[RMDB]
RNA sequence: GGGAACGACUCGAGUAGAGUCGAAAAGAUAUGGAGGCUAAACGAGUAACCCGUUGAACCCAAGCGCUAUCGGAAACGAUAGACCCGCUUGCUCAGCGUGUGCCUACCUCGCUUAGCCUCCUAAGUCCGAAUUGUAACACUUCGGUGUUACAAUUCGAAAAGAAACAACAACAACAAC
Reactivity to 2A3 in 0.01 (KOAc 150mM, MgCl2 10mM, bicine 150mM(pH8.5), 24C), signal-to-noise 1, nucleotides 027 to 126: g020a010u060a030u150g000g020a010g000g000c010u000a000a010a010c010g000a010g040u060a120a140c000c010c000g000u000u000g000a000a020c030c030c030a020a000g000c050g000c000u000a000u020c010g000g000a100a050a010c030g000a010u010a000g040a070c100c050c060g030c000u000u000g010c030u010c010a020g000c020g050u230g060u150g100c010c020u040a130c070c010u000c000g000c000u000u020a010g010c000c000u000c000c000u000a010a000g000u000c000
Reactivity to DMS in 0.01 (KOAc 150mM, MgCl2 10mM, bicine 150mM(pH8.5), 24C), signal-to-noise 3, nucleotides 027 to 126: g000a060u010a230u000g020g000a010g010g000c010u010a020a000a030c010g000a010g000u000a170a100c010c060c000g000u000u000g010a040a130c140c300c080a020a000g000c040g050c000u000a000u010c000g000g010a090a100a140c010g030a010u000a010g000a100c280c280c150g010c010u000u000g020c270u000c000a010g010c000g010u010g010u020g040c140c170u010a120c300c040u010c000g000c020u000u000a010g020c010c000u000c000c000u000a000a050g030u010c020
The record gives the reactivity of an RNA of 177 nucleotides to 2A3 and DMS.
For DMS the reverse transcriptase was MarathonRT.
For DMS, 2,093 sequencing reads were counted.
2A3 adducts were read by reverse transcription with SuperScript II with manganese.
High 2A3 reactivity points to a flexible backbone, as in loops and unpaired stretches.
The data come from the RNA Mapping Database (RMDB), library TTRDES.